Conditions: 150 mM KOAc, 10 mM MgCl2 and 150 mM bicine (pH 8.5), 24 C. An RNA of 177 nucleotides, treated with DMS and 2A3 and read out base by base. Reactivities are given for positions 27 through 126. The DMS profile rests on 2,486 reads. DMS adducts were read by reverse transcription with MarathonRT. It was measured as part of the RMDB library OK2TRN.
RNA sequence: GGGAACGACUCGAGUAGAGUCGAAAAAUUUUUGGCCCGUGUCUAGAAUGGGGCACAUUUCUGACAAUUAAAGUUCCAAAGAACAGCAUCACUGGGGUGGGACUUUUGAAGAUGCUUCCAACCAGCGAUACGUUGUUAACUUCGGUUAACAACGUAUAAAAGAAACAACAACAACAAC
Reactivity to DMS in 0.01 (KOAc 150mM, MgCl2 10mM, bicine 150mM(pH8.5), 24C), signal-to-noise 3, nucleotides 027 to 126: a160u020u000u000u010u010g010g020c080c030c010g040u000g000u010c020u000a050g010a080a040u000g000g000g020g020c110a060c070a050u000u000u000c010u000g000a060c100a100a080u010u020a060a070a090g010u000u010c000c030a050a110a080g010a100a090c090a080g010c070a080u000c080a050c030u000g010g010g010g020u000g000g000g030a010c020u000u000u000u020g000a100a110g010a050u000g000c100u010u010c010c020a050a060c040c040a070g020c060g010
Reactivity to 2A3 in 0.01 (KOAc 150mM, MgCl2 10mM, bicine 150mM(pH8.5), 24C), signal-to-noise 1, nucleotides 027 to 126: a000u140u130u030u010u050g100g010c040c010c020g000u030g000u010c040u110a050g050a100a080u050g030g020g120g130c080a020c020a120u110u120u060c020u020g020a030c000a030a060u170u110a150a030a040g010u040u000c010c010a100a000a000g020a050a040c030a010g080c010a060u050c020a040c050u030g040g010g040g110u050g040g000g000a000c000u000u070u010u050g110a110a030g060a050u060g020c000u050u000c040c010a050a060c010c010a000g010c020g030